[RMDB]
RNA sequence: GGGAACGACUCGAGUAGAGUCGAAAAUGUGAGGACACCAACACUUACACAAAUUACAAUGCAACUCAGUAAGUAUACUCACAAGGGAGCAAAUUCCCUGGAAGAAAUGUUUCAGCUGGGCUGUCGACCUGUAGAGAGACUUCGGUCUCUCUACAGGAAAAGAAACAACAACAACAAC
Reactivity to 2A3 in 0.01 (KOAc 150mM, MgCl2 10mM, bicine 150mM(pH8.5), 24C), signal-to-noise 2, nucleotides 027 to 126: u060g000u000g000a050g090g030a020c040a070c210c020a030a080c000a010c020u030u060a000c050a000c010a000a110a070u100u120a140c170a050a300u150g110c020a030a090c020u030c100a030g020u010a040a020g010u000a000u020a110c010u000c020a030c000a000a030g010g040g030a050g030c080a080a070a220u130u020c000c060c040u020g020g030a100a040g050a040a090a050u110g020u020u040u030c040a000g000c000u020g030g090g000c010u060g020u110c020g030a110
Reactivity to DMS in 0.01 (KOAc 150mM, MgCl2 10mM, bicine 150mM(pH8.5), 24C), signal-to-noise 2, nucleotides 027 to 126: u010g030u000g000a050g010g010a120c070a080c100c040a110a160c060a040c010u000u000a010c050a100c180a070a110a070u000u010a130c260a100a100u040g000c060a070a060c080u010c070a120g000u000a030a020g000u000a030u000a050c030u000c040a030c030a090a050g030g000g000a020g000c080a030a100a160u000u000c000c000c010u000g000g030a120a070g000a040a040a070u000g000u000u000u000c080a060g030c030u000g020g000g010c040u000g010u000c100g020a110
Chemical mapping of a 177-nucleotide RNA with 2A3 and DMS.